[RMDB]
RNA sequence: GGGAACGACUCGAGUAGAGUCGAAAAAAUCACCAGCGACGAACAGGCGGCAAACCUGACUAUGUUAUUGCCUUUACUGGCCACUUUAAGCAAAGACGACCGCUGGUUUGCCUGGGUUUCACCGCCAGUAUCAAUCACCGUUCGCGGUGAUUGAUACAAAAGAAACAACAACAACAAC
Reactivity to 2A3 in 0.01 (KOAc 150mM, MgCl2 10mM, bicine 150mM(pH8.5), 24C), signal-to-noise 2, nucleotides 027 to 126: a000a010u120c040a010c060c000a020g040c020g140a110c040g000a080a010c000a060g110g020c040g040g050c080a030a020a030c020c000u070g070a170c030u100a070u220g020u070u040a160u150u070g010c000c000u100u130u140a190c240u130g000g040c000c030a050c040u030u090u120a070a010g040c070a080a050a060g060a100c060g030a080c040c030g000c050u000g010g100u000u000u020g030c010c000u020g000g000g010u000u060u100c110a090c030c020g050c000c010a020
Reactivity to DMS in 0.01 (KOAc 150mM, MgCl2 10mM, bicine 150mM(pH8.5), 24C), signal-to-noise 2, nucleotides 027 to 126: a060a040u010c040a060c000c010a120g000c010g010a110c060g010a070a060c120a120g010g030c080g010g010c140a030a040a040c040c030u000g000a180c080u000a090u040g000u000u010a100u000u000g000c010c040u010u000u010a100c110u000g000g020c080c210a070c160u000u000u000a070a080g020c010a030a040a300g010a090c030g010a080c170c220g000c010u000g000g000u010u000u000g010c030c000u020g000g040g030u010u010u010c040a050c040c030g000c040c040a110